[RMDB]
RNA sequence: GGGAACGACUCGAGUAGAGUCGAAAAUCUAGGAUGUUCGCAUCCUAGAAAAUACCGAGACUCAACCUCGGUAGAGUUGAGUAUCCCUUGGAAACAAGGGAAAAAGAUGGGGCUUCGGCCCCAUCAACCCCUUAAUAUGCUUCGGCAUAUUAAGGGGAAAAGAAACAACAACAACAAC
Reactivity to DMS in 0.01 (KOAc 150mM, MgCl2 10mM, bicine 150mM(pH8.5), 24C), signal-to-noise 2, nucleotides 027 to 126: u000c000u000a010g010g000a020u010g020u000u050c220g010c030a000u000c000c020u000a030g000a000a020a090a080u000a100c020c000g000a040g020a130c040u000c050a060a050c100c020u000c030g010g020u000a070g010a130g010u000u000g000a040g010u000a280u020c000c000c010u010u010g000g000a170a090a200c010a020a010g000g000g000a010a030a000a090a070g020a020u000g010g010g020g000c020u000u000c280g040g000c000c000c020c000a000u000c000a050a100

This 177-nucleotide RNA was probed chemically with DMS. Conditions: 150 mM KOAc, 10 mM MgCl2 and 150 mM bicine (pH 8.5), 24 C. The data come from the RNA Mapping Database (RMDB), library M2PK50.